Record summary: An RNA of 177 nucleotides, treated with DMS and 2A3 and read out base by base. Values cover nucleotides 27 to 126.

[RMDB]
RNA sequence: GGGAACGACUCGAGUAGAGUCGAAAAGACGGAAAAGAUCGAACCUAAGAAGAUCAGGAAGUGUCAGCCGAAUCCUAGGGCUCCUAGGGACGCAUCGUCGGAUGCGAAAUAAACACUAACGUCGAAAACUCAUUAUGCUCUUCGGAGCAUAAUGAGUAAAAGAAACAACAACAACAAC
Reactivity to DMS in 0.01 (KOAc 150mM, MgCl2 10mM, bicine 150mM(pH8.5), 24C), signal-to-noise 3, nucleotides 027 to 126: g010a040c030g000g000a100a070a070a100g020a000u000c000g000a140a180c090c160u060a190a120g010a070a080g000a000u000c020a090g000g030a100a030g020u030g010u010c170a030g000c090c160g000a130a100u040c010c000u000a000g000g000g070c120u020c010c010u000a020g000g000g000a150c060g010c000a040u000c010g010u050c230g000g010a000u000g020c040g010a040a050a100u000a080a100a040c090a000c010u000a100a090c010g010u000c020g000a010a080a060
Reactivity to 2A3 in 0.01 (KOAc 150mM, MgCl2 10mM, bicine 150mM(pH8.5), 24C), signal-to-noise 4, nucleotides 027 to 126: g000a000c000g030g010a010a080a130a000g000a020u050c050g020a090a140c000c020u060a070a080g040a030a010g000a150u040c020a020g020g170a110a030g000u000g010u060c030a010g130c070c070g070a070a050u040c000c000u010a020g080g040g080c060u130c030c000u010a010g010g000g000a000c010g000c000a000u010c000g300u080c170g160g020a010u000g000c030g020a070a030a000u160a050a080a000c010a000c020u110a120a010c020g020u010c010g010a080a000a030
Annotation: The DMS profile rests on 4,631 reads. High 2A3 reactivity points to a flexible backbone, as in loops and unpaired stretches.